[RMDB]
RNA sequence: GGGAACGACUCGAGUAGAGUCGAAAAAAGGGUAAGUAAGGAGCUGAAAACGAGUCCUUCGGAGGGCGAAGAAACUCAUUAAUUCAUUUUGAUGAGGGCCCCUCAUUCAAAUGUUAUGCUUAGUGCUUCUCGAAUCCAAGUUCGCUUGGAUUCGAGAAAAAGAAACAACAACAACAAC
Reactivity to 2A3 in 0.01 (KOAc 150mM, MgCl2 10mM, bicine 150mM(pH8.5), 24C), signal-to-noise 1, nucleotides 027 to 126: a010a000g030g000g000u030a090a000g000u010a000a070g020g000a000g000c000u030g150a020a020a000a020c080g000a000g020u030c010c000u200u070c020g000g000a050g110g000g000c050g030a080a000g000a050a060a000c000u010c000a020u000u170a000a040u060u210c170a020u060u080u060u060g000a000u000g000a000g020g300g000c010c000c000c100u000c000a140u280u170c010a000a000a080u110g070u020u030a050u080g000c000u110u090a050g070u100g110c110u000
This 177-nucleotide RNA was probed chemically with 2A3. The 2A3 profile rests on 428 reads. The reactions ran in a buffer of 150 mM KOAc, 10 mM MgCl2 and 150 mM bicine (pH 8.5), at 24 C. It was measured as part of the RMDB library RFM100.